[RMDB]
RNA sequence: GGGAACGACUCGAGUAGAGUCGAAAAGGACCUGCAGAGAAGAAGAUAGGGGCAGAGGGGGUUUGAGCCUCGUCGUCGACGAAGGGGUGCAAACCGAGUGCCUGAGCUGGUCGACGUCCAGCUCCCUGUCCAUAUAAAUGUUCGCAUUUAUAUGGACAAAAGAAACAACAACAACAAC
Reactivity to DMS in 0.01 (KOAc 150mM, MgCl2 10mM, bicine 150mM(pH8.5), 24C), signal-to-noise 5, nucleotides 027 to 126: g010g000a130c080c030u010g020c050a070g000a130g010a080a080g000a100a070g010a100u010a090g010g000g000g000c050a040g020a090g010g000g000g010g000u000u000u000g000a180g020c000c010u000c020g010u000c020g020u010c140g000a110c050g000a050a050g010g010g000g020u000g000c020a010a030a050c060c040g000a100g020u000g000c050c030u000g000a070g010c010u000g000g010u000c080g010a090c150g010u000c010c030a040g000c040u000c000c100c040u010
Reactivity to 2A3 in 0.01 (KOAc 150mM, MgCl2 10mM, bicine 150mM(pH8.5), 24C), signal-to-noise 4, nucleotides 027 to 126: g020g010a070c020c010u030g020c060a020g040a000g010a260a010g020a050a010g030a060u150a080g030g020g010g000c030a020g030a080g070g060g010g000g020u020u020u040g020a030g010c000c010u010c000g010u010c010g020u030c040g030a170c030g030a050a010g000g020g000g010u020g010c000a020a030a000c010c000g010a050g050u060g040c000c030u030g010a020g020c020u020g040g000u060c070g040a070c050g040u050c010c000a010g000c010u010c020c000c010u010